Structure probing data (DMS and 2A3) for a 177-nucleotide construct. For DMS the reverse transcriptase was MarathonRT. 2A3 adducts were read by reverse transcription with SuperScript II with manganese.
RNA sequence: GGGAACGACUCGAGUAGAGUCGAAAAAUGGUUAUAAUGACUUUUGGUGUAUCCAUCUUCCAAUAGAAUGGCAACUAGUCAGACAUCUGUUUAGACACCAAAAUCAUUAUUUGUUUUCAUUCAUCUCGUACUGGAAGACUUUCGAGUCUUCCAGUACAAAAGAAACAACAACAACAAC
Reactivity to DMS in 0.01 (KOAc 150mM, MgCl2 10mM, bicine 150mM(pH8.5), 24C), signal-to-noise 3, nucleotides 027 to 126: a010u040g020g010u000u020a010u000a020a000u000g000a050c260u000u000u000u010g010g040u010g000u040a270u020c000c030a070u000c040u000u000c100c300a110a110u080a010g000a040a030u000g010g000c300a190a300c030u000a020g020u000c030a000g000a160c300a210u040c020u000g000u000u010u000a030g010a150c000a000c010c000a010a010a000a010u000c000a000u020u000a000u010u010u000g020u000u010u010u000c070a050u000u000c140a110u000c010u020c110
Reactivity to 2A3 in 0.01 (KOAc 150mM, MgCl2 10mM, bicine 150mM(pH8.5), 24C), signal-to-noise 4, nucleotides 027 to 126: a000u050g030g000u030u030a010u000a010a010u000g030a100c110u000u000u000u010g000g020u010g010u010a080u070c000c000a020u000c060u120u070c110c010a070a030u140a100g100a090a020u030g010g000c040a090a090c050u040a030g040u050c010a010g080a120c090a140u210c080u010g040u020u050u050a010g000a000c000a020c010c000a000a000a000a000u020c010a000u000u020a000u030u020u070g180u040u080u020u060c030a050u030u030c030a060u000c030u020c050